[RMDB]
RNA sequence: GGGAACGACUCGAGUAGAGUCGAAAACAAGCCAGAGUUCUCAACAGAGCCGCCCUCUACGAAGUCUUUCAGGAUGGACGCUCUUUCGCGCAGAUGCCCUGGCGGGUCCUAGGUAGGUCCAGAACUCGCACUCCCAUUAGUUCGCUAAUGGGAGUGCAAAAGAAACAACAACAACAAC
Reactivity to 2A3 in 0.01 (KOAc 150mM, MgCl2 10mM, bicine 150mM(pH8.5), 24C), signal-to-noise 2, nucleotides 027 to 126: c060a000a050g130c030c010a040g000a030g070u040u050c040u000c020a050a120c050a100g020a010g040c010c050g000c020c080c010u030c000u060a080c130g030a100a090g090u110c120u020u150u070c020a010g040g010a080u080g050g010a000c000g010c030u030c000u030u070u030c100g000c030g070c050a000g030a110u120g000c000c040c010u020g000g000c000g000g020g000u020c000c000u050a070g070g110u120a020g000g000u040c010c010a020g020a140a030c030u000c060
Reactivity to DMS in 0.01 (KOAc 150mM, MgCl2 10mM, bicine 150mM(pH8.5), 24C), signal-to-noise 1, nucleotides 027 to 126: c150a130a150g080c010c100a060g000a020g030u000u000c000u010c010a160a300c150a000g010a100g070c120c020g000c000c020c000u020c030u030a060c080g030a070a130g000u070c060u000u000u000c090a200g020g000a020u050g110g000a090c170g000c010u000c010u000u000u030c090g000c080g000c090a080g060a030u010g030c000c000c010u000g010g000c030g030g090g020u000c000c000u000a120g000g100u010a050g000g000u000c000c000a020g020a070a020c050u000c160

The data come from the RNA Mapping Database (RMDB), library OK1LIB. The record gives the reactivity of an RNA of 177 nucleotides to 2A3 and DMS. For DMS, 1,056 sequencing reads were counted. Conditions: 150 mM KOAc, 10 mM MgCl2 and 150 mM bicine (pH 8.5), 24 C. High DMS reactivity at an A or C suggests that its Watson-Crick edge is free.